[RMDB]
RNA sequence: GGGAACGACUCGAGUAGAGUCGAAAAGAUGGCCGGUUAUGCAACCACAGUGAACGUAGUGCUGCUUGAGGAUGGCGGUGUCGAGGUCGCCGACGACGGCCGCGGCAUUCCGGUCGCCACCCACGCCGAGAACAAUAGAGUUCGCUCUAUUGUUCUCAAAAGAAACAACAACAACAAC
Reactivity to DMS in 0.01 (KOAc 150mM, MgCl2 10mM, bicine 150mM(pH8.5), 24C), signal-to-noise 5, nucleotides 027 to 126: g010a070u010g010g010c030c020g000g020u030u010a040u000g010c030a200a110c040c020a130c050a070g010u030g010a100a140c140g010u000a060g020u030g010c020u010g000c060u010u030g010a200g030g000a130u020g000g020c010g010g010u000g000u000c050g010a110g010g000u000c030g020c040c050g020a140c100g010a190c080g000g020c010c020g000c020g000g040c020a020u000u000c020c010g000g010u010c010g000c040c030a130c010c010c010a090c230g010c130c160
Reactivity to 2A3 in 0.01 (KOAc 150mM, MgCl2 10mM, bicine 150mM(pH8.5), 24C), signal-to-noise 9, nucleotides 027 to 126: g110a070u120g010g000c010c000g000g020u210u060a080u090g010c010a030a060c030c020a020c030a060g050u080g180a170a060c130g080u160a070g060u120g140c020u010g010c020u090u130g060a080g090g070a170u160g090g000c020g000g010u050g040u070c030g020a040g040g030u060c030g040c060c060g050a100c070g010a010c010g050g000c000c000g000c000g020g000c000a010u040u020c010c000g010g000u020c000g000c010c010a070c000c010c000a020c040g070c070c090
The record gives the reactivity of an RNA of 177 nucleotides to DMS and 2A3. The DMS profile rests on 17,690 reads. For 2A3 the reverse transcriptase was SuperScript II with manganese. DMS (dimethyl sulfate) methylates the pairing face of unpaired adenines and cytosines. DMS adducts were read by reverse transcription with MarathonRT. Values cover nucleotides 27 to 126.